[RMDB]
RNA sequence: GGGAACGACUCGAGUAGAGUCGAAAAGACAUGGCGUGGUGCAUAUCACCUCCCAGAAUGCCACGCCUUUCCAGAACGCAGACCUGCCACCUGGAGUGGCCAUGGACCCUGAACUCGCCAGGAAGAGGUCUAAAACUUGGUUCGCCAAGUUUUAGACAAAAGAAACAACAACAACAAC
Reactivity to DMS in 0.01 (KOAc 150mM, MgCl2 10mM, bicine 150mM(pH8.5), 24C), signal-to-noise 3, nucleotides 027 to 126: g000a110c190a060u010g010g040c000g020u000g010g040u010g000c150a050u000a130u000c050a100c110c070u010c020c030c020a120g000a090a050u010g000c000c030a010c030g000c000c000u000u020u000c000c000a110g000a120a130c120g020c090a060g000a080c040c030u000g000c030c030a070c030c010u000g000g020a140g020u000g010g020c120c120a030u000g010g010a080c090c040c030u000g020a080a110c090u000c050g040c060c020a090g000g010a120a090g020a100g020
Reactivity to 2A3 in 0.01 (KOAc 150mM, MgCl2 10mM, bicine 150mM(pH8.5), 24C), signal-to-noise 2, nucleotides 027 to 126: g080a030c060a070u080g020g020c020g020u010g050g050u120g110c120a090u150a220u240c050a080c070c040u030c000c000c020a020g100a060a030u190g000c000c030a020c000g000c000c000u000u010u000c010c010a050g000a110a030c060g020c050a000g020a090c020c010u070g040c010c010a050c030c010u190g080g050a170g080u030g030g000c020c010a020u050g010g010a050c000c000c010u020g010a040a030c020u020c060g040c010c020a010g040g070a050a050g050a050g020

The record gives the reactivity of an RNA of 177 nucleotides to DMS and 2A3. The RNA was probed in 150 mM KOAc, 10 mM MgCl2 and 150 mM bicine (pH 8.5) at 24 C. For DMS the reverse transcriptase was MarathonRT. Values cover nucleotides 27 to 126.